RNA sequence: GGGAACGACUCGAGUAGAGUCGAAAAGUGAUAGCAGUCGCUACGGCGCUAGCAGCUAAAGUGUUUGUGAUAGGGUGCCAAGGGAAUGCUGGGCAACAGAUUGUUAAUGUUCCUGCGGCCAAUAUCAUUCCGGAGGUGGGAACAAGAAAAGACGACGGCUAUCUGUGGAAUUCGUUCCACAGAUAGCAAAAGAAACAACAACAACAAC
Reactivity to 2A3 in 0.01 (KOAc 150mM, MgCl2 10mM, bicine 150mM(pH8.5), 24C), signal-to-noise 1, nucleotides 027 to 156: g030u030g040a090u030a000g020c030a040g030u150c110g040c060u030a040c090g160g000c010g010c110u020a020g000c030a000g020c010u180a100a110a090g090u130g020u090u250u070g070u040g030a020u090a050g060g050g040u110g030c000c030a000a030g040g000g020a060a000u010g000c030u060g020g070g000c040a120a020c040a080g070a070u090u140g050u050u130a140a140u100g000u020u020c000c010u000g010c030g060g000c030c000a010a000u020a000u080c040a030u140u110c050c060g040g000a070g070g000u120g020g030g040a000a050c030a030a100g110a020a050a010a040g120a050c060g090a000c030g030